[RMDB]
RNA sequence: GGGAACGACUCGAGUAGAGUCGAAAAGAUAUGGACAAAGCAGACGCACUACGACGAAGAAAGCGCUACUUCGGAAACGAAGUAGCGCUUUCAGAGUAGUGAACUACGUCGGCUUUGUCCUAAGUCAUCAUGUAACCUUCUUCGGAAGGUUACAUGAAAAAGAAACAACAACAACAAC
Reactivity to DMS in 0.01 (KOAc 150mM, MgCl2 10mM, bicine 150mM(pH8.5), 24C), signal-to-noise 2, nucleotides 027 to 126: g020a050u000a300u020g010g000a010c010a000a010a030g020c000a040g000a000c020g000c010a040c000u010a000c000g000a220c290g000a210a170g000a020a010a000g010c000g060c000u000a040c000u000u000c020g010g000a120a050a130c000g020a020a000g020u000a050g000c000g020c000u000u000u000c000a020g010a190g000u000a010g010u000g010a090a060c130u030a300c020g010u000c000g000g040c010u010u000u010g000u000c000c020u000a000a040g000u000c020a300